[RMDB]
RNA sequence: GGGAACGACUCGAGUAGAGUCGAAAAGUUAACUUGCCACUGGCUAUCAAUAUUAUACGAUGACUAGGUAUAAUGCAAUGGAUUGUCAUCCUGAAUCCAGAAGCACGAUGCGUUAUUAUACUGUGCGAGCCGACGCUGAUAAUGAUGUAUAAAGAUGAAACAUGAUAUUCUUCGGAAUAUCAUGUUUAAAAGAAACAACAACAACAAC
Reactivity to 2A3 in 0.01 (KOAc 150mM, MgCl2 10mM, bicine 150mM(pH8.5), 24C), signal-to-noise 7, nucleotides 027 to 156: g030u050u060a060a070c020u040u090g030c020c030a090c070u050g020g000c030u050a030u160c050a040a070u040a050u230u100a060u040a050c080g060a090u100g080a070c080u080a040g030g050u020a030u020a060a070u090g020c060a050a070u060g010g010a020u040u060g110u110c050a040u050c020c050u060g030a010a020u010c010c000a020g040a100a030g020c030a030c130g050a040u060g000c010g020u000u010a020u030u010a030u020a110c060u060g030u070g050c030g010a030g000c030c020g050a050c020g000c020u010g030a010u010a090a040u040g050a020u040g060u050a050u060a090a080a030g110a040u250g060
Reactivity to DMS in 0.01 (KOAc 150mM, MgCl2 10mM, bicine 150mM(pH8.5), 24C), signal-to-noise 6, nucleotides 027 to 156: g010u000u000a050a100c050u000u000g010c010c050a100c040u000g020g020c020u000a100u010c050a100a160u000a100u010u000a140u010a090c100g020a070u010g020a060c040u000a070g010g030u010a060u010a060a040u000g010c040a100a260u000g000g010a030u000u000g030u000c050a110u000c110c040u010g020a050a040u000c010c020a080g010a170a160g050c040a050c030g010a070u010g010c010g010u000u000a060u000u000a060u000a040c030u000g000u000g010c010g010a160g030c070c050g000a060c050g010c010u000g000a050u010a030a050u000g010a060u000g020u000a070u000a050a080a130g010a150u000g010
An RNA of 207 nucleotides, treated with 2A3 and DMS and read out base by base. 2A3 adducts were read by reverse transcription with SuperScript II with manganese. The data come from the RNA Mapping Database (RMDB), library OK3TST.